Structure probing data (DMS and 2A3) for a 177-nucleotide construct. Source: RMDB library OK2TRN, as collected in RNAgym. The DMS profile rests on 1,156 reads. For 2A3 the reverse transcriptase was SuperScript II with manganese. The RNA was probed in 150 mM KOAc, 10 mM MgCl2 and 150 mM bicine (pH 8.5) at 24 C.
RNA sequence: GGGAACGACUCGAGUAGAGUCGAAAAGAUCGCCGCGUCGGAUCUGAAGUCGGGCAAGUCCGAUCCGGACUACAUCGGCAAGGUCGAGAUUCAGGUCGCGUGUUACGCGCACGGGAUGAAAUACGACUGCAUCACGUCAUUUCGAUGACGUGAUGCAAAAAGAAACAACAACAACAAC
Reactivity to DMS in 0.01 (KOAc 150mM, MgCl2 10mM, bicine 150mM(pH8.5), 24C), signal-to-noise 2, nucleotides 027 to 126: g000a060u010c040g000c160c050g050c170g000u010c030g010g000a050u000c020u000g040a050a050g000u010c040g000g010g010c070a150a120g010u020c000c020g000a080u000c190c010g030g000a060c110u010a060c160a050u000c020g020g030c000a150a160g040g000u010c000g040a100g000a140u000u010c000a020g010g000u010c000g020c000g000u010g010u000u010a070c140g030c080g000c060a020c020g000g020g000a070u010g000a040a050a070u000a110c020g040a110c030
Reactivity to 2A3 in 0.01 (KOAc 150mM, MgCl2 10mM, bicine 150mM(pH8.5), 24C), signal-to-noise 2, nucleotides 027 to 126: g050a130u070c050g050c090c010g060c080g070u030c030g020g000a070u000c020u060g030a090a040g060u030c050g000g000g010c120a230a000g020u000c000c000g020a140u000c050c130g030g030a080c100u100a080c040a180u080c040g010g010c030a050a120g070g080u010c020g020a060g000a200u060u030c020a060g280g000u000c080g070c050g150u050g000u070u140a090c130g040c050g000c010a010c030g020g030g020a050u050g050a010a110a000u200a030c050g020a010c040